[RMDB]
RNA sequence: GGGAACGACUCGAGUAGAGUCGAAAAGCACCGCCGCAGUGCAGCCAACCUCCAACCGCACACACGCUGCCCGAGCCUGCUGCUGUCGCAGUCAUACCCGGUCCGGGGCCGGACCCGGGUAGGCGUAAUCCCUGCAUGGGUUCGCCCAUGCAGGGAUAAAAGAAACAACAACAACAAC
Reactivity to DMS in 0.01 (KOAc 150mM, MgCl2 10mM, bicine 150mM(pH8.5), 24C), signal-to-noise 1, nucleotides 027 to 126: g000c020a110c030c040g040c070c100g000c080a060g060u000g000c000a110g000c050c070a030a080c080c040u010c010c070a090a110c070c050g000c040a070c130a060c110a050c060g000c040u000g000c000c010c040g010a070g010c040c040u000g040c040u000g020c040u020g000u000c130g010c040a060g000u000c110a110u000a020c000c000c000g000g010u000c010c040g000g030g050g010c240c030g010g000a020c080c040c030g020g000g010u000a010g010g010c040g040u020a060

The data come from the RNA Mapping Database (RMDB), library OK2TRN.
The record gives the reactivity of an RNA of 177 nucleotides to DMS.
The DMS profile rests on 1,037 reads.
Conditions: 150 mM KOAc, 10 mM MgCl2 and 150 mM bicine (pH 8.5), 24 C.